[RMDB]
RNA sequence: GGGAACGACUCGAGUAGAGUCGAAAAUCAGAAGCGCGCCAAAUCGUUGGGCAGCAUCAGAUCGAAGCCCUCCUUUAGGCUAUUCCACCGCUGCGUGAAAUGACGGCUGGAAUGCGCGCUUGGCGCCCCGUCCCACCUGAUUCGUCAGGUGGGACGGAAAAGAAACAACAACAACAAC
Reactivity to 2A3 in 0.01 (KOAc 150mM, MgCl2 10mM, bicine 150mM(pH8.5), 24C), signal-to-noise 3, nucleotides 027 to 126: u110c050a020g050a150a000g020c020g000c010g010c080c060a020a030a080u180c080g020u030u080g000g020g000c030a010g110c030a020u100c080a020g130a170u120c020g110a060a040g000c010c000c000u110c060c000u090u110u210a000g100g000c070u080a010u000u000c020c000a010c000c060g080c030u100g020c050g080u180g210a190a070a070u170g030a060c000g010g090c110u000g000g000a050a000u090g020c040g030c000g000c000u010u040g040g000c020g040c030c000
Reactivity to DMS in 0.01 (KOAc 150mM, MgCl2 10mM, bicine 150mM(pH8.5), 24C), signal-to-noise 1, nucleotides 027 to 126: u080c070a100g010a100a020g010c090g000c000g000c010c060a020a010a110u010c000g040u100u000g000g010g000c020a060g000c280a020u040c300a000g000a100u000c100g000a220a060g000c070c000c020u000c050c000u000u000u050a080g010g020c020u040a110u000u000c000c000a040c260c150g000c100u070g070c070g050u000g010a050a040a030u000g000a110c000g020g000c290u020g000g000a020a060u000g000c000g030c000g040c120u010u000g020g000c040g000c010c010